[RMDB]
RNA sequence: GGGAACGACUCGAGUAGAGUCGAAAAGGGGGAGGAUCAGCACCCGAGAGGGGAUGUCACGGUAAAGAGCAUUGGAACGUCGGAGAAACUACUCCCAAGAAGCAAAGAGAGGUCUUAGGAAGCGGACGUUUCACAAAGAGUUCGCUCUUUGUGAAACAAAAGAAACAACAACAACAAC
Reactivity to DMS in 0.01 (KOAc 150mM, MgCl2 10mM, bicine 150mM(pH8.5), 24C), signal-to-noise 1, nucleotides 027 to 126: g020g000g000g020g000a090g010g000a110u000c030a040g020c080a160c030c020c020g020a140g000a130g010g020g000g000a060u010g020u000c050a060c000g010g030u000a030a020a060g010a140g000c080a070u020u020g000g010a020a020c090g010u000c030g000g000a070g000a090a100a040c060u010a110c080u010c030c020c020a100a010g000a050a040g010c120a050a050a040g010a110g020a050g000g020u000c050u000u010a070g040g000a210a040g000c050g010g000a040c130